[RMDB]
Conditions: 150 mM KOAc, 10 mM MgCl2 and 150 mM bicine (pH 8.5), 24 C. Chemical mapping of a 207-nucleotide RNA with 2A3 and DMS. Values cover nucleotides 27 to 156. The 2A3 profile rests on 1,969 reads. It was measured as part of the RMDB library OK3TST. For DMS, 3,663 sequencing reads were counted.
RNA sequence: GGGAACGACUCGAGUAGAGUCGAAAACAGUGCCCCCAGUUGCAUAGCUCUGGGAGAUGACAUCCACCUUGAAUCUCCACAGUGGAACCUCUAGGGCUAUGACUUAGCGUCCAUUGUUAUGUUACCACCUGGAGUUGCACAAGGGGCCCUGGAUGAAACGGAGUAUAUCAUUCGUGAUAUACUCCGUAAAAGAAACAACAACAACAAC
Reactivity to 2A3 in 0.01 (KOAc 150mM, MgCl2 10mM, bicine 150mM(pH8.5), 24C), signal-to-noise 3, nucleotides 027 to 156: c000a000g000u000g010c000c000c000c040c000a040g030u220u030g020c030a040u060a090g020c000u000c010u010g000g030g000a020g010a020u030g020a030c010a030u060c040c070a100c050c040u060u130g050a090a090u050c050u070c060c020a080c000a100g010u030g030g050a090a190c030c040u010c010u030a030g000g000g000c030u120a040u050g010a010c000u020u060a000g000c020g050u010c070c040a070u030u120g010u030u050a020u050g020u020u010a030c020c060a020c010c000u000g000g000a030g000u100u030g000c010a010c000a080a050g000g000g000g000c000c030c000u040g000g040a070u150g070a110a100
Reactivity to DMS in 0.01 (KOAc 150mM, MgCl2 10mM, bicine 150mM(pH8.5), 24C), signal-to-noise 2, nucleotides 027 to 156: c020a060g030u000g020c050c000c040c020c000a140g000u000u000g000c010a080u000a100g010c020u000c020u010g010g010g010a050g000a040u000g010a110c030a060u000c100c040a050c090c050u000u030g020a240a120u010c070u000c060c020a140c170a090g020u020g000g000a060a140c040c030u000c010u010a030g040g000g010c050u020a100u000g000a100c060u000u010a050g060c190g000u000c050c060a130u010u000g000u010u000a150u000g000u000u000a090c040c040a100c020c020u010g020g000a080g000u000u040g030c030a080c050a170a080g020g010g020g040c000c000c010u000g000g010a120u010g000a110a190